[RMDB]
Chemical mapping of a 207-nucleotide RNA with 2A3. The RNA was probed in 150 mM KOAc, 10 mM MgCl2 and 150 mM bicine (pH 8.5) at 24 C. Values are in units of 0.01, from 0 to 300, in steps of 10. Values cover nucleotides 27 to 156.
RNA sequence: GGGAACGACUCGAGUAGAGUCGAAAAUGUGGGUUCGCCCACACACUGGGGGUCUCGAGGAGAACCGAUGAGCGUGGAACUACCUCUGAAGCCUCCACGGAGGCCACGCGAGGUUCUUCUCGAGACGGAGGCACCCGAUCUACGAUUUCGAUCGUAAGAUUUUAGGGGAUUUCGAUCCCCUAAAAUCAAAAGAAACAACAACAACAAC
Reactivity to 2A3 in 0.01 (KOAc 150mM, MgCl2 10mM, bicine 150mM(pH8.5), 24C), signal-to-noise 2, nucleotides 027 to 156: u060g000u000g000g020g000u050u100c200g150c040c010c000a000c010a000c000a010c030u090g000g000g000g000g000u000c020u010c000g000a000g000g000a000g010a010a000c020c040g090a300u300g040a020g010c020g020u000g000g010a150a120c100u090a090c190c000u000c000u000g020a040a010g000c000c000u050c000c000a000c000g000g000a000g040g000c000c020a000c000g000c020g020a050g020g000u000u000c000u000u000c000u000c010g000a000g000a000c000g000g000a000g000g000c000a000c000c000c000g040a040u020c020u050a020c030g050a080u040u140u120c120g060a020u030c000g060u040a120a050